[RMDB]
Structure probing data (2A3 and DMS) for a 177-nucleotide construct. Conditions: 150 mM KOAc, 10 mM MgCl2 and 150 mM bicine (pH 8.5), 24 C. 2A3 adducts were read by reverse transcription with SuperScript II with manganese.
RNA sequence: GGGAACGACUCGAGUAGAGUCGAAAAGCACCGCCGCAGUGCAGCCAACCGCCGACCGCACACACGCUGCCCGAGCCUGCUCCUGUCGCAGUCGUACCCGGUCCGGGGCCGGACCCGGGUAGGCGUACGUAGCCAUUUAUUUCGAUAAAUGGCUACGAAAAGAAACAACAACAACAAC
Reactivity to 2A3 in 0.01 (KOAc 150mM, MgCl2 10mM, bicine 150mM(pH8.5), 24C), signal-to-noise 2, nucleotides 027 to 126: g020c000a030c030c030g100c030c040g010c060a010g020u030g050c010a000g000c010c010a030a060c020c000g000c000c020g060a050c030c050g040c030a030c020a000c000a000c090g040c040u030g030c010c010c000g010a050g070c000c020u020g030c040u020c000c020u050g040u070c050g040c160a030g020u050c060g140u020a020c000c020c000g020g010u000c010c000g030g010g150g040c110c010g040g020a090c130c230c000g000g020g000u020a020g020g000c020g000u000a020
Reactivity to DMS in 0.01 (KOAc 150mM, MgCl2 10mM, bicine 150mM(pH8.5), 24C), signal-to-noise 3, nucleotides 027 to 126: g010c060a060c060c050g020c030c020g010c060a070g030u010g000c050a100g000c020c060a090a090c080c050g020c040c030g020a060c080c030g010c050a070c120a090c090a050c060g020c010u010g000c030c020c020g020a100g000c040c010u000g020c030u000c010c010u000g010u000c050g020c110a090g020u010c020g000u000a030c010c010c010g010g010u000c010c020g010g010g000g020c160c020g010g000a030c070c030c030g020g010g020u000a020g020g000c030g030u010a090